Chemical mapping of a 177-nucleotide RNA with 2A3 and DMS. The reactions ran in a buffer of 150 mM KOAc, 10 mM MgCl2 and 150 mM bicine (pH 8.5), at 24 C.

RNA sequence: GGGAACGACUCGAGUAGAGUCGAAAAGGGCGAGUGCGCCCGAACUGCUCACCCUGCGCCUGACCGACCGUGCCCCCAACGAGUACGGGCGGCAGUGCUGCGGCGGCGAGGUGACGCUGCUGCUCGAGAGUGCCUACUUUUUCGAAAGUAGGCACUCAAAAGAAACAACAACAACAAC
Reactivity to 2A3 in 0.01 (KOAc 150mM, MgCl2 10mM, bicine 150mM(pH8.5), 24C), signal-to-noise 2, nucleotides 027 to 126: g000g000g000c040g010a150g260u190g080c040g040c020c010c000g010a030a030c030u060g000c010u000c020a070c000c000c020u050g020c000g020c030c000u130g080a300c020c000g000a020c000c000g000u020g000c020c010c000c020c020a060a020c070g030a030g040u030a010c000g000g010g030c000g010g060c000a000g000u160g000c070u130g010c030g020g000c080g030g000c020g000a050g040g140u120g010a030c050g000c020u080g010c020u000g000c000u010c050g080a090
Reactivity to DMS in 0.01 (KOAc 150mM, MgCl2 10mM, bicine 150mM(pH8.5), 24C), signal-to-noise 2, nucleotides 027 to 126: g010g040g000c010g010a190g020u000g020c120g020c010c000c030g000a040a100c200u010g000c000u000c020a060c020c000c000u000g020c030g010c010c000u000g000a120c000c000g010a040c040c000g000u000g010c000c000c010c120c270a150a090c190g010a030g030u000a020c020g000g000g020c020g000g000c020a010g010u020g040c020u020g070c020g020g000c080g000g030c010g000a060g000g000u020g000a150c070g020c030u000g000c030u000g000c000u000c030g000a290
The 2A3 profile rests on 2,279 reads. Values cover nucleotides 27 to 126. It was measured as part of the RMDB library OK2TRN.